[RMDB]
RNA sequence: GGGAACGACUCGAGUAGAGUCGAAAACUCUGAAGGCAUGAUCACCCCGUCCGAUGCGGAAGUUCGUGCUUCCGUCGAACGCGAAAGUCGGACGGCGGCCAUGAGUCACAACGCAAAGCCGCGGCAAUAAGCUCGUCGUCGUUCGCGACGACGAGAACGAAGCUAGUUUGUUCGCAAACUAGCUUCGAAAAGAAACAACAACAACAAC
Reactivity to 2A3 in 0.01 (KOAc 150mM, MgCl2 10mM, bicine 150mM(pH8.5), 24C), signal-to-noise 2, nucleotides 027 to 156: c040u000c020u040g050a170a110g050g000c020a040u190g000a030u140c070a020c020c000c000c000g000u020c000c000g010a020u030g010c060g020g010a010a040g030u170u300c170g150u300g010c000u000u000c000c000g000u000c020g090a230a030c070g010c040g050a030a030a000g000u000c000g020g010a000c010g000g010c030g000g000c040c000a020u050g010a010g030u050c000a010c040a110a080c020g020c070a100a090a080g030c070c000g040c070g070g000c020a020a140u100a300a010g010c000u000c000g000u000c000g000u000c000g000u050u060c170g040c000g230a010c000g000a000c010g000a000g000a000a000
Chemical mapping of a 207-nucleotide RNA with 2A3. Values are in units of 0.01, from 0 to 300, in steps of 10. 2A3 adducts were read by reverse transcription with SuperScript II with manganese.